[RMDB]
RNA sequence: GGGAACGACUCGAGUAGAGUCGAAAAUAGAAGAAGGUGAAUCAGAGUGCAUUUCUGAGACUUCAACUGAACAAGUUGACGUUUCUCAUGAGACUUCUGACGACGAGUGGGCUGCUGCAGUUGAUGAUACGACCCGCCUUCGGGCGGGUCAAAAGAAACAACAACAACAAC
Reactivity to DMS in 0.01 (KOAc 150mM, MgCl2 10mM, bicine 150mM(pH8.5), 24C), signal-to-noise 4, nucleotides 027 to 129: u020a090g030a100a130g030a030a050g040g000u000g090a260a090u080c020a030g070a050g030u020g090c070a180u000u000u040c080u020g000a060g000a100c020u010u020c000a000a020c000u040g030a120a090c270a130a090g000u020u030g000a030c140g020u000u000u050c020u000c140a010u140g060a060g040a040c020u070u000c020u080g000a070c170g050a130c040g050a030g020u050g060g030g070c030u000g000c050u020g020c020a080g010u020u020g000a000u030g000a180u000a100c180
Reactivity to 2A3 in 0.01 (KOAc 150mM, MgCl2 10mM, bicine 150mM(pH8.5), 24C), signal-to-noise 1, nucleotides 027 to 129: u190a000g080a040a000g040a010a060g010g010u090g040a000a060u020c030a000g010a000g030u070g000c040a060u000u000u080c030u060g010a000g000a000c020u020u000c000a000a000c000u050g040a080a100c130a280a060g000u000u000g030a000c000g000u100u020u120c020u000c010a040u160g010a010g020a020c000u030u000c000u020g010a000c000g000a000c010g000a000g000u050g010g000g000c000u040g000c000u000g010c000a010g050u030u080g060a030u030g020a050u000a110c050
This 170-nucleotide RNA was probed chemically with DMS and 2A3. High 2A3 reactivity points to a flexible backbone, as in loops and unpaired stretches. The DMS profile rests on 4,117 reads. High DMS reactivity at an A or C suggests that its Watson-Crick edge is free. Values cover nucleotides 27 to 129.